Chemical mapping of a 177-nucleotide RNA with DMS and 2A3. For DMS, 3,812 sequencing reads were counted. The RNA was probed in 150 mM KOAc, 10 mM MgCl2 and 150 mM bicine (pH 8.5) at 24 C. It was measured as part of the RMDB library 15KREP. Reactivities are given for positions 27 through 126.
RNA sequence: GGGAACGACUCGAGUAGAGUCGAAAAGAAGUUGUAAACAAGUACUUCGAAAUCUAUGACGGUGGUUGUCUUAAUGCUUCUGAAGUGGUUGUUAAUAAUUUAGACAAGAGUGCUGGCCAUCCUUUUAGCAUUAAGAGUAGUUCGCUACUCUUAAUGCAAAAGAAACAACAACAACAAC
Reactivity to DMS in 0.01 (KOAc 150mM, MgCl2 10mM, bicine 150mM(pH8.5), 24C), signal-to-noise 3, nucleotides 027 to 126: g010a050a040g010u010u000g020u000a100a060a070c070a050a050g010u010a040c010u010u000c020g000a030a050a080u000c080u010a070u010g010a090c100g010g020u010g010g000u010u010g000u000c020u010u010a100a090u000g000c120u000u000c030u010g030a050a030g030u000g000g010u000u000g000u000u000a070a060u010a040a040u010u000u000a100g000a090c070a060a090g010a060g020u010g010c030u000g000g010c030c030a070u020c030c010u010u000u000u000a150
Reactivity to 2A3 in 0.01 (KOAc 150mM, MgCl2 10mM, bicine 150mM(pH8.5), 24C), signal-to-noise 2, nucleotides 027 to 126: g050a000a010g010u050u080g050u230a060a080a030c030a010a060g140u000a030c000u020u030c010g000a060a040a020u060c060u010a070u130g060a050c030g040g060u060g070g040u070u110g020u000c000u010u060a090a050u060g000c020u040u000c050u080g040a040a020g050u030g060g040u030u030g030u050u010a020a010u050a060a040u100u060u090a020g030a000c020a080a010g050a010g050u050g020c010u000g010g000c010c020a050u030c000c020u020u080u020u000a050